[RMDB]
RNA sequence: GGGAACGACUCGAGUAGAGUCGAAAAGUGGGUCCCUCAUCUCUCCUCCCCACGCUUGGCCAGGUCCCCACCUCCCGGGAGUGCGUGGGCUUUGAGGCUGUGCAGGAAGUGCCGGUGGGGCUGGUGCAUAUAUGCUGUUCUUCGGAACAGCAUAUAUAAAAGAAACAACAACAACAAC
Reactivity to DMS in 0.01 (KOAc 150mM, MgCl2 10mM, bicine 150mM(pH8.5), 24C), signal-to-noise 4, nucleotides 027 to 126: g020u000g000g000g010u000c050c010c030u000c050a070u010c060u000c050u000c020c020u000c070c000c010c010a040c080g010c070u010u010g010g010c010c010a050g010g010u000c010c010c000c010a030c020c010u000c030c010c020g010g000g010a140g020u000g000c040g020u010g000g000g010c170u000u000u000g010a100g010g010c110u000g020u000g010c050a070g010g010a110a090g010u010g030c040c070g020g010u000g010g010g010g000c020u000g010g020u000g000c150
Reactivity to 2A3 in 0.01 (KOAc 150mM, MgCl2 10mM, bicine 150mM(pH8.5), 24C), signal-to-noise 1, nucleotides 027 to 126: g080u080g000g000g080u060c030c030c020u030c040a120u010c010u000c010u000c030c000u030c000c000c010c000a010c020g050c020u070u140g040g000c000c000a050g060g100u230c000c000c000c010a000c000c000u000c000c000c000g030g020g000a060g040u050g010c000g010u040g050g050g010c000u100u080u060g050a030g000g000c000u070g030u080g050c000a010g050g070a150a030g070u070g080c030c030g000g020u000g020g000g000g030c000u000g000g010u050g020c000